[RMDB]
RNA sequence: GGGAACGACUCGAGUAGAGUCGAAAACUAGGCAGAGUGGGAGCUCGAGCGGGAUGCACAGAGAACUGGUCACGACCGGGAAGUCCUUGCUCGAGGAUGAAGAGUCAAGGGCUCUCCUACUCGUGACGCGGCUAUCAAGCUUCGGCUUGGUAGCCGCAAAAGAAACAACAACAACAAC
Reactivity to 2A3 in 0.01 (KOAc 150mM, MgCl2 10mM, bicine 150mM(pH8.5), 24C), signal-to-noise 2, nucleotides 027 to 126: c010u020a060g040g030c010a000g060a030g090u080g010g030g000a020g020c000u010c030g000a020g040c040g000g030g010a030u100g020c100a080c060a090g080a000g050a080a080c030u050g060g020u010c010a010c000g040a030c020c100g000g000g000a010a000g000u000c000c010u000u070g000c000u000c000g020a010g070g070a100u110g030a050a090g000a000g080u200c040a010a020g000g010g000c000u000c000u000c010c000u030a030c020u000c000g000u010g000a020c050
Reactivity to DMS in 0.01 (KOAc 150mM, MgCl2 10mM, bicine 150mM(pH8.5), 24C), signal-to-noise 1, nucleotides 027 to 126: c040u000a010g000g020c000a060g010a100g000u010g000g000g000a100g010c060u030c010g070a140g010c080g040g030g010a060u010g000c000a060c020a070g000a110g000a110a130c030u020g010g020u000c010a030c120g000a050c190c250g000g000g000a020a000g000u000c000c000u000u000g000c000u010c000g000a140g000g000a160u010g030a060a120g000a110g000u010c030a060a000g000g000g030c020u000c040u000c000c000u000a080c300u000c010g010u000g000a030c040